Notes: Chemical mapping of a 177-nucleotide RNA with 2A3 and DMS. Values cover nucleotides 27 to 126. For DMS, 10,587 sequencing reads were counted. The 2A3 profile rests on 2,991 reads. It was measured as part of the RMDB library OK2TST.
RNA sequence: GGGAACGACUCGAGUAGAGUCGAAAAGUCUUAUGUUCAUGAAGUUGAACGUGUAAGAGGAUUUGCUUAUUACAUGUCACAGAAGGCCAUCGUUUUUUUGCGUGAUUUAGAAAAACGUACUGAGUCAACCCUCACUAAAUUUCGAUUUAGUGAGGGUAAAAGAAACAACAACAACAAC
Reactivity to 2A3 in 0.01 (KOAc 150mM, MgCl2 10mM, bicine 150mM(pH8.5), 24C), signal-to-noise 4, nucleotides 027 to 126: g010u000c020u030u140a080u160g030u010u090c080a120u140g140a150a140g080u090u040g000a110a010c010g000u020g020u020a030a020g000a030g040g060a090u100u120u240g070c000u010u040a030u020u020a080c010a020u060g020u020c010a030c030a090g130a170a020g050g000c030c020a040u080c040g030u000u000u000u000u010u040u060g050c070g060u120g130a170u090u140u110a060g050a010a020a010a010a010c010g020u050a040c070u050g030a020g020u040c000a000
Reactivity to DMS in 0.01 (KOAc 150mM, MgCl2 10mM, bicine 150mM(pH8.5), 24C), signal-to-noise 7, nucleotides 027 to 126: g010u010c030u000u000a050u000g010u010u000c040a060u000g010a170a120g010u000u000g020a050a040c010g040u000g020u000a010a010g000a060g010g000a270u010u010u010g010c020u000u000a100u000u000a030c030a030u000g000u000c040a070c070a090g000a140a080g010g000c050c020a060u000c040g000u000u000u000u010u010u000u010g010c240g000u010g010a110u000u000u000a060g000a030a020a020a020a040c060g010u010a080c110u010g010a060g010u000c040a100